[RMDB]
RNA sequence: GGGAACGACUCGAGUAGAGUCGAAAAAUUAAUCGGAUCUUGGCGGCUAAAUGAUGAAGAUCCCACCACUCAUCGUUUGUUAAAUGGGAAUAGUAGAGGCAGCGCAUCUUGUUUAUAAUACUAUAUGCGCAGUCAUACUGUUCGCAGUAUGACUGCGAAAAGAAACAACAACAACAAC
Reactivity to DMS in 0.01 (KOAc 150mM, MgCl2 10mM, bicine 150mM(pH8.5), 24C), signal-to-noise 2, nucleotides 027 to 126: a020u030u070a040a140u020c140g040g000a080u020c050u020u020g000g020c100g000g000c020u020a050a050a040u040g000a020u020g000a070a090g000a080u010c040c020c080a060c200c090a160c050u030c040a020u010c040g000u010u000u000g000u020u030a070a040a020u000g020g020g020a060a040u000a070g000u000a010g010a130g020g010c090a050g000c000g000c030a010u000c080u000u000g000u000u000u040a050u010a030a120u040a060c050u000a030u000a040u000g000
Reactivity to 2A3 in 0.01 (KOAc 150mM, MgCl2 10mM, bicine 150mM(pH8.5), 24C), signal-to-noise 2, nucleotides 027 to 126: a010u100u120a000a040u100c050g000g000a010u010c010u000u180g010g010c000g100g070c050u180a180a090a040u140g020a080u050g070a000a010g030a070u050c000c000c000a030c000c000a030c030u000c000a000u010c000g040u000u130u050g100u140u080a080a010a140u280g000g000g060a050a030u030a060g180u050a080g000a040g040g000c020a010g000c000g000c000a010u000c050u010u030g050u030u050u050a160u080a120a040u120a040c050u020a050u020a020u200g010